[RMDB]
Source information:
Chemical mapping of a 177-nucleotide RNA with DMS. For DMS, 540 sequencing reads were counted. The data come from the RNA Mapping Database (RMDB), library OK2TST.
RNA sequence: GGGAACGACUCGAGUAGAGUCGAAAAUAAAUCGUUUUUUCGAUUGGCCUGGUUUACGGCUUUUAGGAUUUGACUUUUUACAAAACUACGUGUUUUUUGAGAAUCCGACUCCAGAGAACCAUUUUCAAACACACUGACCAUUCGUGGUCAGUGUGUUAAAAGAAACAACAACAACAAC
Reactivity to DMS in 0.01 (KOAc 150mM, MgCl2 10mM, bicine 150mM(pH8.5), 24C), signal-to-noise 1, nucleotides 027 to 126: u010a050a020a010u000c020g000u010u020u020u000u010u020c020g060a020u020u000g040g030c030c020u010g020g010u010u000u000a200c240g050g020c280u000u000u020u000a200g000g020a060u010u010u000g010a190c090u000u000u030u000u030a080c070a000a000a020a040c040u000a130c170g010u000g030u000u000u000u000u000u000g000a300g000a020a020u000c020c040g010a090c130u000c000c000a100g000a300g010a050a040c000c040a150u000u000u000u020c040a090